[RMDB]
RNA sequence: GGGAACGACUCGAGUAGAGUCGAAAAAUUAGCCAGGCGUGGUGUCAUGAGCCUGUGGUCUCAACUACUCAGGAGGCUGAGGCUGGAGGAUCGCUUGAACCUGGGAGGUCAAGGCUCCAGUGAACCAAUGGAUGUUAGACUUCGGUCUAACAUCCAUAAAAGAAACAACAACAACAAC
Reactivity to DMS in 0.01 (KOAc 150mM, MgCl2 10mM, bicine 150mM(pH8.5), 24C), signal-to-noise 2, nucleotides 027 to 126: a080u000u000a100g010c020c010a080g000g020c110g010u000g000g000u000g000u000c080a080u000g020a060g000c040c000u000g010u000g020g000u010c010u010c020a070a010c080u030a050c070u030c060a100g000g010a140g010g020c010u010g030a030g010g000c010u010g000g020a010g010g020a070u020c170g020c010u010u000g010a070a040c020c000u010g000g000g000a140g010g000u000c040a050a050g010g000c030u000c010c010a020g020u000g010a100a150c070c040a170
Reactivity to 2A3 in 0.01 (KOAc 150mM, MgCl2 10mM, bicine 150mM(pH8.5), 24C), signal-to-noise 1, nucleotides 027 to 126: a020u050u060a020g020c040c000a010g010g010c040g000u090g050g050u040g140u200c020a040u100g070a030g000c000c090u140g060u090g090g060u040c030u000c010a120a160c020u160a070c020u040c110a060g120g000a020g210g080c000u020g020a000g040g020c030u020g000g030a000g000g100a040u130c070g040c150u000u070g030a050a060c010c010u120g020g170g050a110g030g010u000c000a020a040g020g000c000u010c010c000a000g040u010g050a050a020c000c120a050